[RMDB]
RNA sequence: GGGAACGACUCGAGUAGAGUCGAAAAAAGAUAUGGACAGGAGGGAGCUCAAGAUGAGGAGCGAUGAAAGACUUCGGAAACGAAGUCUGGAGCUCUUGAGAGCGAAGAACUCCUGUCCUAAGUCAAACUAGCUAUUACGGUUCGCCGUAAUAGCUAGAAAAGAAACAACAACAACAAC
Reactivity to DMS in 0.01 (KOAc 150mM, MgCl2 10mM, bicine 150mM(pH8.5), 24C), signal-to-noise 3, nucleotides 027 to 126: a170a080g000a050u030a300u000g000g000a000c010a020g000g000a020g000g000g000a120g010c000u010c000a060a210g020a300u020g010a120g000g000a010g020c000g030a120u000g000a160a160a020g010a030c000u000u010c000g000g010a110a070a210c000g000a000a010g010u000c000u000g000g000a080g010c010u000c010u000u000g000a190g000a020g010c000g000a060a130g000a100a240c010u000c000c000u010g010u010c000c000u000a020a080g020u000c010a100a090a300
Reactivity to 2A3 in 0.01 (KOAc 150mM, MgCl2 10mM, bicine 150mM(pH8.5), 24C), signal-to-noise 2, nucleotides 027 to 126: a020a020g100a040u070a050u150g010g020a000c000a000g030g010a020g000g000g020a010g030c010u010c000a070a070g130a300u300g300a120g300g030a010g020c000g120a210u070g020a020a020a010g000a000c000u000u000c010g000g040a040a060a020c010g000a020a000g010u000c000u010g000g000a000g000c000u020c000u030u060g090a080g000a000g020c010g140a300a010g030a030a010c000u000c000c000u000g000u040c000c000u000a010a000g010u000c010a060a060a070